[RMDB]
RNA sequence: GGGAACGACUCGAGUAGAGUCGAAAAGGAGGCCUGAUGUUAACCCUUUAUUCAUACUCACGCCUACUGCUGUAGAAAUGGUAGCAUCACUAUGUACAAUGCUAAUGCUCAGCUUCCAUGUGCUAGUAGAAUGUCUUUAAUAUCAACUUUACCACUGAGCUGCAAGUGUAUUCGUACACUUGCAGCUAAAAGAAACAACAACAACAAC
Reactivity to 2A3 in 0.01 (KOAc 150mM, MgCl2 10mM, bicine 150mM(pH8.5), 24C), signal-to-noise 2, nucleotides 027 to 156: g030g000a000g020g060c010c010u050g030a100u060g000u080u140a070a150c010c000c000u020u030u150a080u080u120c100a090u030a020c000u010c020a040c040g070c000c010u060a080c040u040g020c000u060g000u090a010g020a030a150a010u020g110g010u020a050g020c000a000u060c000a000c040u100a160u230g060u040a020c050a140a180u140g000c000u110a090a000u080g020c050u030c180a000g020c060u110u070c000c050a050u130g020u040g040c030u030a000g020u050a030g100a030a030u070g070u000c010u000u110u060a130a090u140a080u090c060a020a120c110u120u150u170a050c020c210a060c120u090g070
About this RNA:
An RNA of 207 nucleotides, treated with 2A3 and read out base by base. The data come from the RNA Mapping Database (RMDB), library OK3TST. Conditions: 150 mM KOAc, 10 mM MgCl2 and 150 mM bicine (pH 8.5), 24 C.